[RMDB]
RNA sequence: GGGAACGACUCGAGUAGAGUCGAAAACUGAGCUUUCGAGCUCAGGAUGGAGGGGUCUUGCGCAAUGAACUACUACAUCGAUCAGCCUGAAGCCUCCACGGGCUGGGAGUAGCAGCGCAAGACGGAGGCACCCGAGAAAGCCACAUUCGUGUGGCAAGAUUGCACGACAGUUCGCUGUCGUGCAAUCAAAAGAAACAACAACAACAAC
Reactivity to 2A3 in 0.01 (KOAc 150mM, MgCl2 10mM, bicine 150mM(pH8.5), 24C), signal-to-noise 1, nucleotides 027 to 156: c000u000g010a000g000c000u060u150u300c300g130a010g030c000u000c000a000g030g010a010u240g000g100a120g050g000g000g020u000c020u020u000g020c000g030c050a130a260u240g060a300a090c030u130a020c010u040a000c120a150u300c020g010a000u010c000a000g000c000c000u050g050a190a010g030c020c000u000c010c000a000c000g030g030g000c000u000g000g040g000a010g000u010a000g030c160a030g010c050g000c000a000a000g000a000c070g000g000a000g000g000c000a060c000c000c010g070a110g220a030a070a000g020c000c000a010c000a000u100u170c300g000u120g010u010g060g000c010a000a000